[RMDB]
RNA sequence: GGGAACGACUCGAGUAGAGUCGAAAAGAAUACGAACAUCAAUUAAGCUCCGAGAAUGCACAUCUUUGCAUACAACGCAAAUAACACUUUAAUCAGAGAUCACAUACCUAUACUCGGCUGAUAUAGGGUGGCAACCAGAGUUCGCUCUGGUUGCCACAAAAGAAACAACAACAACAAC
Reactivity to 2A3 in 0.01 (KOAc 150mM, MgCl2 10mM, bicine 150mM(pH8.5), 24C), signal-to-noise 1, nucleotides 027 to 126: g030a000a000u200a030c110g060a040a030c030a010u110c030a070a260u180u080a300a000g060c070u050c090c020g020a060g000a110a230u180g020c150a030c000a200u010c100u000u000u000g000c000a100u040a200c170a040a000c060g000c070a000a000a000u300a100a070c130a070c010u000u000u190a280a070u110c060a060g030a000g060a030u060c060a110c010a060u090a180c000c000u010a060u110a140c090u060c010g160g000c010u000g030a030u060a060u060a000g000g130

An RNA of 177 nucleotides, treated with 2A3 and read out base by base. For 2A3, 387 sequencing reads were counted. As a SHAPE reagent, 2A3 marks flexible, mostly unpaired nucleotides at the ribose 2'-OH.